[RMDB]
RNA sequence: GGGAACGACUCGAGUAGAGUCGAAAAGAUAUGGAACUCUGAGAGAGCUGAUGACCCAUGGUGAUAGCUGUAUGUCGGAAACGACAUACCGAAACCAUGGCAAGGCUCUCAUGGGAGUUCCUAAGUCGUAUCUUUAAAUGUUCGCAUUUAAAGAUACAAAAGAAACAACAACAACAAC
Reactivity to DMS in 0.01 (KOAc 150mM, MgCl2 10mM, bicine 150mM(pH8.5), 24C), signal-to-noise 9, nucleotides 027 to 126: g000a090u010a300u010g000g000a020a010c010u000c010u000g010a270g010a020g000a010g030c000u000g010a100u010g000a120c300c000c000a010u000g000g010u000g010a180u010a210g010c220u010g020u000a000u000g010u000c000g000g000a080a060a130c000g010a010c000a000u000a000c000c050g010a100a300a040c000c000a000u000g000g000c020a050a060g000g020c000u000c000u000c000a010u010g010g000g000a040g000u000u000c000c000u010a020a080g000u000c110
Reactivity to 2A3 in 0.01 (KOAc 150mM, MgCl2 10mM, bicine 150mM(pH8.5), 24C), signal-to-noise 7, nucleotides 027 to 126: g030a030u090a060u170g000g000a000a020c010u010c030u220g110a120g000a000g000a000g170c010u050g030a300u100g020a130c000c000c010a000u000g000g010u070g020a300u180a190g080c110u040g010u000a000u010g000u010c000g010g020a030a040a040c000g000a000c000a000u000a000c000c000g000a050a000a010c000c000a010u000g000g000c010a060a070g000g000c000u000c000u000c000a000u010g010g020g010a000g000u000u000c000c000u000a030a010g030u010c070